[RMDB]
RNA sequence: GGGAACGACUCGAGUAGAGUCGAAAAGAAUCACCGUACCUAUUUAGGUUUACGCUCCAAGCUCGGUGGAUAGCAGCCCUAUCAAUAUCUAGGAGAACUGUGCUAUGUUUAGAAGAUUAGGUAGUCUAUUACACAGCCAUGUUCGCAUGGCUGUGAAGAGUGUAGGGAAGUUCGCUUCCCUACACUCAAAAGAAACAACAACAACAAC
Reactivity to 2A3 in 0.01 (KOAc 150mM, MgCl2 10mM, bicine 150mM(pH8.5), 24C), signal-to-noise 3, nucleotides 027 to 156: g080a020a070u080c000a000c030c010g000u040a040c010c010u100a160u270u270u300a070g000g020u020u050u130a050c070g020c030u060c070c030a080a060g000c040u030c010g020g020u050g020g030a030u060a040g000c030a000g010c040c010c010u060a080u080c060a110a110u040a060u170c030u060a030g040g070a120g030a110a110c070u090g010u040g050c040u020a020u120g090u060u070u040a080g020a160a000g000a060u090u080a020g120g010u010a010g070u020c030u060a140u030u130a080c010a000c000a000g000c000c000a010u010g040u030u070c050g000c040a000u000g000g000c000u000g020u010g000a000a000
Reactivity to DMS in 0.01 (KOAc 150mM, MgCl2 10mM, bicine 150mM(pH8.5), 24C), signal-to-noise 2, nucleotides 027 to 156: g000a110a090u000c010a210c040c010g080u000a070c010c010u010a160u010u010u010a050g030g000u010u000u000a060c080g010c050u020c010c030a090a120g030c070u010c010g010g020u000g010g010a100u000a050g020c050a130g000c080c030c010u000a140u010c030a100a100u010a030u000c080u020a070g020g020a120g020a090a040c070u010g020u000g000c030u010a070u010g010u010u000u000a090g030a090a120g000a120u000u000a080g010g020u010a090g020u000c030u010a100u010u020a260c010a000c000a010g000c000c000a050u000g000u000u010c300g020c020a050u000g020g030c010u000g010u000g000a010a040